The record gives the reactivity of an RNA of 207 nucleotides to 2A3 and DMS.
It was measured as part of the RMDB library RNAMAK.
2A3 adducts were read by reverse transcription with SuperScript II with manganese.
For DMS, 1,830 sequencing reads were counted.
The RNA was probed in 150 mM KOAc, 10 mM MgCl2 and 150 mM bicine (pH 8.5) at 24 C.
RNA sequence: GGGAACGACUCGAGUAGAGUCGAAAACGAGCUUUCGAGCUCGCAGGGGCGUACUACUUGACAUGAGUAGUGAUGGGAGUUAUUUCCCAAAUAGGAAAUAACAUCGAUCAUCAUGGGCUCAACAGCAAGUAUCGCAGUAAUUUCACUUCGGUGAAAAUAUCCAAGGAGAGUUCGCUCUCCUUGGAUAAAAAGAAACAACAACAACAAC
Reactivity to 2A3 in 0.01 (KOAc 150mM, MgCl2 10mM, bicine 150mM(pH8.5), 24C), signal-to-noise 2, nucleotides 027 to 156: c010g020a000g020c000u060u090u300c210g190a000g000c010u020c000g020c060a010g020g100g050g010c010g070u090a040c030u000a000c000u040u000g050a100c050a070u030g000a010g020u050a000g000u000g000a000u000g010g060g000a050g010u000u000a000u010u000u070c000c000c000a150a220a030u300a060g000g000a000a000a000u000a000a000c070a300u300c030g130a090u010c000a000u010c010a000u040g070g300g030c010u020c030a060a050c090a030g030c000a010a010g000u020a040u300c050g000c010a030g010u060a080a150u010u010u050c000a010c000u040u060c280g130g000u020g000a000a050a000a040
Reactivity to DMS in 0.01 (KOAc 150mM, MgCl2 10mM, bicine 150mM(pH8.5), 24C), signal-to-noise 1, nucleotides 027 to 156: c010g000a020g000c010u000u020u020c160g040a060g010c010u020c000g000c000a110g030g010g060g030c000g030u020a080c060u010a000c000u000u000g000a080c120a300u000g010a010g040u000a300g000u000g000a020u010g000g010g020a120g040u000u000a070u000u010u000c010c000c020a010a090a160u000a050g010g000a010a050a030u000a000a010c000a190u000c110g000a070u010c000a000u000c040a050u000g000g030g050c000u000c000a030a090c090a100g000c000a030a030g000u020a020u010c010g010c000a160g040u000a090a120u010u000u010c000a010c010u010u020c290g040g000u000g020a020a020a060a280